This 177-nucleotide RNA was probed chemically with DMS and 2A3. The data come from the RNA Mapping Database (RMDB), library OK2TRN. Conditions: 150 mM KOAc, 10 mM MgCl2 and 150 mM bicine (pH 8.5), 24 C. DMS (dimethyl sulfate) methylates the pairing face of unpaired adenines and cytosines.
RNA sequence: GGGAACGACUCGAGUAGAGUCGAAAAUCAUUCUUGAAUGCCAACUUCCACUUCCAACAAUAGUUACAGAGUUUUGGUUGCUCUACAACCUCAUCAGCACUUGAUUUUGUAAGAUACUGAAUGUAAACCCAUCAUUUUAUUUCGAUAAAAUGAUGGGAAAAGAAACAACAACAACAAC
Reactivity to DMS in 0.01 (KOAc 150mM, MgCl2 10mM, bicine 150mM(pH8.5), 24C), signal-to-noise 5, nucleotides 027 to 126: u020c050a090u010u000c050u000u020g020a100a080u010g000c030c040a070a110c050u000u010c030c010a070c050u000u010c030c040a090a110c100a100a090u000a060g010u000u000a090c100a080g010a070g020u000u000u000u000g020g010u000u000g020c040u000c060u000a090c090a040a060c050c030u000c060a050u000c030a040g030c070a050c050u000u000g000a080u010u000u000u010g020u010a070a040g000a120u010a050c060u000g010a060a060u000g010u000a040a120a150
Reactivity to 2A3 in 0.01 (KOAc 150mM, MgCl2 10mM, bicine 150mM(pH8.5), 24C), signal-to-noise 5, nucleotides 027 to 126: u040c010a030u060u020c020u050u120g110a090a040u100g010c010c020a020a040c060u040u000c000c000a050c020u060u000c030c010a050a040c020a070a180u090a140g080u090u060a070c040a060g080a050g030u010u050u080u100g050g000u030u080g030c020u040c010u090a040c020a040a080c020c020u030c010a090u020c010a000g050c020a020c060u040u040g050a050u140u090u100u090g070u070a030a020g020a050u060a110c050u080g040a040a050u060g010u100a050a070a050